[RMDB]
The record gives the reactivity of an RNA of 177 nucleotides to DMS and 2A3.
RNA sequence: GGGAACGACUCGAGUAGAGUCGAAAAAACAGCCCGGUGGCUGCUGCAGCCUCGGCGACCUGCAAGAAUCCCCGGCGGCUGCAUCCCUGUCGCACAGCGUGAGGGUAUCGCGCGCGUUACCGCCGGCGACGUUUGGCUAAUUCGUUAGCCAAACGUCAAAAGAAACAACAACAACAAC
Reactivity to DMS in 0.01 (KOAc 150mM, MgCl2 10mM, bicine 150mM(pH8.5), 24C), signal-to-noise 2, nucleotides 027 to 126: a040a120c020a050g020c090c020c050g030g020u000g000g000c040u000g010c110u020g000c030a070g030c020c000u000c000g010g010c160g000a060c190c010u000g010c130a090a110g010a190a150u000c010c090c000c000g000g010c070g000g020c090u000g000c040a060u000c010c040c030u010g000u020c070g030c030a150c160a140g010c040g020u000g010a030g000g030g010u000a070u000c030g000c030g030c040g010c100g010u000u000a080c040c000g000c020c000g000g010c260
Reactivity to 2A3 in 0.01 (KOAc 150mM, MgCl2 10mM, bicine 150mM(pH8.5), 24C), signal-to-noise 1, nucleotides 027 to 126: a000a030c000a000g000c000c000c000g070g030u180g020g000c020u040g000c100u140g030c050a000g000c000c010u000c000g040g000c000g020a080c050c000u110g070c060a070a070g060a160a160u100c060c000c000c010g030g010c060g030g010c030u040g010c010a020u050c020c000c040u030g140u070c050g080c040a100c070a280g000c020g030u010g090a050g070g130g130u150a070u080c050g050c000g000c000g000c010g090u010u110a000c010c010g000c000c000g040g050c090